[RMDB]
Structure probing data (DMS and 2A3) for a 177-nucleotide construct. For 2A3, 18,889 sequencing reads were counted. High 2A3 reactivity points to a flexible backbone, as in loops and unpaired stretches.

RNA sequence: GGGAACGACUCGAGUAGAGUCGAAAAGAUAUGGAUCGGCAGUGAUCUUACAGGCGUUGAAAUCGGAAACGAUGGAGCCUGUAUGGUUUGCUGCGAUCCUAAGUCAAAAGCGGAGUUCGCUCCGCAAGAAUACUAAAUUCUUCGGAAUUUAGUAUUCAAAAGAAACAACAACAACAAC
Reactivity to DMS in 0.01 (KOAc 150mM, MgCl2 10mM, bicine 150mM(pH8.5), 24C), signal-to-noise 6, nucleotides 027 to 126: g010a040u000a300u000g000g010a010u000c000g010g040c010a010g020u000g000a010u000c000u000u000a010c000a010g000g010c000g020u000u010g000a080a120a030u000c000g000g000a150a090a210c010g010a020u000g000g000a140g010c000c000u010g000u000a000u000g010g000u000u010u010g040c010u000g000c010g000a010u000c000c000u000a010a070g010u010c040a080a060a110a130g010c000g010g000a020g010u000u010c250g000c000u000c010c000g010c010a030a030
Reactivity to 2A3 in 0.01 (KOAc 150mM, MgCl2 10mM, bicine 150mM(pH8.5), 24C), signal-to-noise 6, nucleotides 027 to 126: g020a000u070a040u170g010g000a010u010c040g280g020c030a000g010u010g020a010u000c000u010u000a010c000a010g000g010c010g300u300u080g010a050a050a000u000c000g000g030a070a050a070c010g000a010u010g010g020a000g000c000c010u010g000u010a000u000g010g020u000u050u300g000c000u000g000c000g000a000u000c000c000u000a040a020g060u020c030a010a060a100a080g000c010g000g000a000g010u070u110c190g100c100u000c000c000g000c000a000a000